The record gives the reactivity of an RNA of 177 nucleotides to DMS and 2A3. The RNA was probed in 150 mM KOAc, 10 mM MgCl2 and 150 mM bicine (pH 8.5) at 24 C. The data come from the RNA Mapping Database (RMDB), library OK2TST. For 2A3, 29,247 sequencing reads were counted. The DMS profile rests on 31,110 reads.
[RMDB]
RNA sequence: GGGAACGACUCGAGUAGAGUCGAAAACGGGGCGCUGAUGCACGGCCCCACCUUCAUGGCCAAUCCGCUGGCCUGUGCGGUCUCGGUGGCCAGUGUGGAGCUGCUGCUCGGCCAGGACUGGCGCACGCUAUGCUAGCUAUUUCGAUAGCUAGCAUAGAAAAGAAACAACAACAACAAC
Reactivity to DMS in 0.01 (KOAc 150mM, MgCl2 10mM, bicine 150mM(pH8.5), 24C), signal-to-noise 9, nucleotides 027 to 126: c090g010g000g010g010c130g020c030u000g010a060u000g010c020a060c040g010g000c000c010c010c000a010c020c200u010u010c170a160u000g010g000c000c010a050a120u010c020c010g010c220u000g010g000c000c010u000g020u010g020c180g020g010u000c010u000c020g010g010u000g010g010c000c000a010g010u000g010u000g000g010a060g000c010u000g010c220u000g000c010u000c030g010g000c020c060a090g010g010a070c060u000g000g000c030g010c070a080c140g010
Reactivity to 2A3 in 0.01 (KOAc 150mM, MgCl2 10mM, bicine 150mM(pH8.5), 24C), signal-to-noise 7, nucleotides 027 to 126: c030g000g010g060g000c070g010c070u080g030a080u240g010c020a000c020g010g010c010c040c030c000a020c010c010u080u140c070a220u090g010g000c010c010a030a140u060c050c040g030c160u040g000g090c000c010u050g140u200g070c150g010g010u010c020u010c020g020g010u020g000g000c000c020a020g010u050g010u030g020g000a020g000c010u040g010c050u010g000c000u030c030g030g000c010c010a020g030g050a030c060u050g030g000c030g000c030a030c030g030